[RMDB]
An RNA of 177 nucleotides, treated with 2A3 and DMS and read out base by base. The reactions ran in a buffer of 150 mM KOAc, 10 mM MgCl2 and 150 mM bicine (pH 8.5), at 24 C. Reactivities are given for positions 27 through 126.
RNA sequence: GGGAACGACUCGAGUAGAGUCGAAAAAGGACCUGGCCGAGUAUCAGGGACUCACCGACACGCGGGAGAGAUACGACGAACACGAACCAAGCGAGUUCCGAAUCCUCGGAGCGGAGGACGACGGCGAACCUAUGAUAAUCUUCGGAUUAUCAUAGGUAAAAGAAACAACAACAACAAC
Reactivity to 2A3 in 0.01 (KOAc 150mM, MgCl2 10mM, bicine 150mM(pH8.5), 24C), signal-to-noise 8, nucleotides 027 to 126: a000g070g010a040c020c020u020g050g000c020c030g040a030g030u070a070u130c070a060g020g000g030a030c010u010c020a060c020c020g060a040c020a020c080g070c030g010g050g000a060g010a000g010a060u100a170c110g040a020c030g020a150a010c040a000c070g070a120a030c030c020a030a010g070c030g040a030g030u070u010c010c000g020a030a040u040c010c020u010c030g020g040a050g030c040g020g030a020g030g000a010c030g010a010c020g020g040c030g010a030
Reactivity to DMS in 0.01 (KOAc 150mM, MgCl2 10mM, bicine 150mM(pH8.5), 24C), signal-to-noise 9, nucleotides 027 to 126: a060g010g010a150c040c010u000g010g010c070c040g010a090g020u000a080u010c100a110g000g010g010a070c030u000c030a100c050c020g000a140c240a070c100g010c050g000g010g000a160g000a090g010a100u000a070c130g000a120c090g000a150a090c060a060c060g000a070a090c080c090a090a090g010c050g010a060g010u000u000c010c010g010a150a100u000c080c040u000c020g010g000a090g010c090g010g000a040g010g000a050c050g010a130c100g000g000c080g000a110
For DMS, 16,993 sequencing reads were counted. The 2A3 profile rests on 22,383 reads.